[RMDB]
RNA sequence: GGGAACGACUCGAGUAGAGUCGAAAAUGCGAUGAGCCGAGAAGCCGACAUUUGUCGGUACCUCAAACAGCGGCAUAAGAGUAUAUGCUCACCUGCCGGAUUGCAGGAUGCCGGGUAAAUGUUUUUGGAUACAAUUGAAUUUCGAUUCAAUUGUAUCAAAAGAAACAACAACAACAAC
Reactivity to DMS in 0.01 (KOAc 150mM, MgCl2 10mM, bicine 150mM(pH8.5), 24C), signal-to-noise 9, nucleotides 027 to 126: u010g010c040g010a100u020g010a190g010c050c120g000a070g020a220a300g020c010c010g020a020c000a300u020u020u020g010u000c000g000g020u010a020c230c010u000c040a090a060a120c160a090g000c000g000g000c010a020u000a110a150g010a030g020u000a130u030a100u030g010c000u000c000a300c050c040u000g000c000c110g000g000a120u020u010g000c040a010g000g010a070u000g000c000c000g000g010g010u020a030a080a100u000g010u000u000u000u000u000g010
Reactivity to 2A3 in 0.01 (KOAc 150mM, MgCl2 10mM, bicine 150mM(pH8.5), 24C), signal-to-noise 9, nucleotides 027 to 126: u140g010c030g040a060u090g040a070g050c040c030g040a030g010a130a040g030c000c000g010a010c050a150u170u190u300g010u000c000g000g000u010a020c000c010u020c000a060a070a080c040a040g100c000g010g000c010a010u050a130a060g030a000g080u090a090u060a050u300g020c000u010c000a040c000c000u010g020c020c030g170g110a220u140u280g000c010a000g010g040a020u030g010c000c000g030g000g070u170a100a110a070u090g040u020u040u020u040u070g110